This 207-nucleotide RNA was probed chemically with DMS and 2A3. The reactions ran in a buffer of 150 mM KOAc, 10 mM MgCl2 and 150 mM bicine (pH 8.5), at 24 C. As a SHAPE reagent, 2A3 marks flexible, mostly unpaired nucleotides at the ribose 2'-OH.
RNA sequence: GGGAACGACUCGAGUAGAGUCGAAAAACAGUACCAGCUGCUACGGCAGCUGGUACCGAACUUUCAUGGAGUUAAGAAACCACGUAAACAAAGCGGAACCGAAAAGCUAAACGAGUAGGAAGAAUAAAUAGGUACCACCACUUCGGUGGUGGUACAACCAAAUUAUUAAGUUCGCUUAAUAAUUUGGAAAAGAAACAACAACAACAAC
Reactivity to DMS in 0.01 (KOAc 150mM, MgCl2 10mM, bicine 150mM(pH8.5), 24C), signal-to-noise 2, nucleotides 027 to 156: a100c030a000g020u000a010c010c010a070g050c010u000g030c020u000a090c280g060g030c000a040g080c000u000g000g010u010a030c000c000g020a060a090c070u000u000u000c090a110u020g000g010a200g060u000u010a100a200g000a110a110a060c010c010a020c050g010u010a110a140a110c040a050a100a100g000c020g030g000a020a150c040c010g000a120a040a100a040g010c000u010a100a050a090c080g000a090g010u020a140g020g000a180a070g010a110a050u000a020a060a170u010a100g000g000u000a000c000c000a040c000c000a010c000u000u000c280g040g010u010g010g010u000g000g000u010a020c000a000a080
Reactivity to 2A3 in 0.01 (KOAc 150mM, MgCl2 10mM, bicine 150mM(pH8.5), 24C), signal-to-noise 5, nucleotides 027 to 156: a000c030a010g020u000a010c000c000a000g000c000u010g020c000u030a060c240g110g000c020a000g000c010u000g010g000u000a000c000c000g000a030a030c010u070u160u150c080a110u120g090g010a040g050u080u100a130a050g060a120a100a010c030c020a050c070g040u110a060a150a070c050a070a180a000g010c020g010g070a100a080c000c000g020a000a010a010a000g020c050u170a200a100a000c000g000a000g000u010a010g090g040a070a030g040a050a070u240a130a050a040u110a060g140g010u000a000c000c000a000c000c000a010c020u070u060c250g070g000u000g010g000u000g000g000u000a000c000a000a000